[RMDB]
RNA sequence: GGGAACGACUCGAGUAGAGUCGAAAACUCUGUGAUCUCACCACACAGUGAUUGCAAUCAAAUCUACCUGUGUGUUUCCAGAAGCUUGGGAGGCUUAUUAGAGUGUCACCUUCUUUUGUAUGGACGGCAACUCGGGGCAUUUCGAUGCCCCGAGUUGAAAAGAAACAACAACAACAAC
Reactivity to 2A3 in 0.01 (KOAc 150mM, MgCl2 10mM, bicine 150mM(pH8.5), 24C), signal-to-noise 2, nucleotides 027 to 126: c030u030c010u000g050u060g180a050u060c000u000c080a020c050c000a000c000a000c000a000g020u000g190a220u030u040g050c040a080a180u080c130a140a270a030u010c070u090a050c020c020u000g000u000g000u000g010u000u140u000c040c000a060g050a120a020g040c010u050u070g070g030g000a030g070g070c000u020u000a090u030u080a130g030a000g000u070g090u010c040a010c060c070u050u020c070u020u090u070u100g090u090a140u020g060g010a020c020g050g000